[RMDB]
RNA sequence: GGGAACGACUCGAGUAGAGUCGAAAAGGAUGCAACGUAGUAAUAUGUGUCAUUGCUCGCUCUUGAAUGACACAUUACUAGUCGUGGUUUGAGACAAGAGCGAGCUCGAGUUACGACAUCUGUAUCGCUACUAGUUACUAUUCGUAGUGACUAGUAGAAAAGAAACAACAACAACAAC
Reactivity to 2A3 in 0.01 (KOAc 150mM, MgCl2 10mM, bicine 150mM(pH8.5), 24C), signal-to-noise 9, nucleotides 027 to 126: g030g000a000u010g000c010a020a020c040g010u010a020g010u010a010a050u060a060u230g180u040g050u080c050a110u020u150g010c010u000c010g010c010u010c000u020u040g070a080a040u080g010a020c010a000c000a060u030u020a050c050u060a040g100u050c080g020u040g030g070u030u050u100g100a040g000a010c010a020a000g000a000g010c000g000a000g000c000u000c010g030a030g000u010u010a010c010g030a020c010a020u020c050u040g010u010a020u020c010g000
Reactivity to DMS in 0.01 (KOAc 150mM, MgCl2 10mM, bicine 150mM(pH8.5), 24C), signal-to-noise 9, nucleotides 027 to 126: g000g000a020u000g010c010a060a080c150g010u000a030g010u000a000a050u000a090u010g020u010g010u010c070a110u010u000g010c010u000c010g010c010u000c010u000u000g010a100a080u010g000a040c020a030c030a060u000u000a060c160u010a110g010u000c130g010u000g000g010u000u000u000g000a160g000a140c030a020a020g000a020g010c010g000a020g010c000u000c070g000a060g010u000u000a020c020g000a070c040a060u000c130u000g010u000a050u000c050g010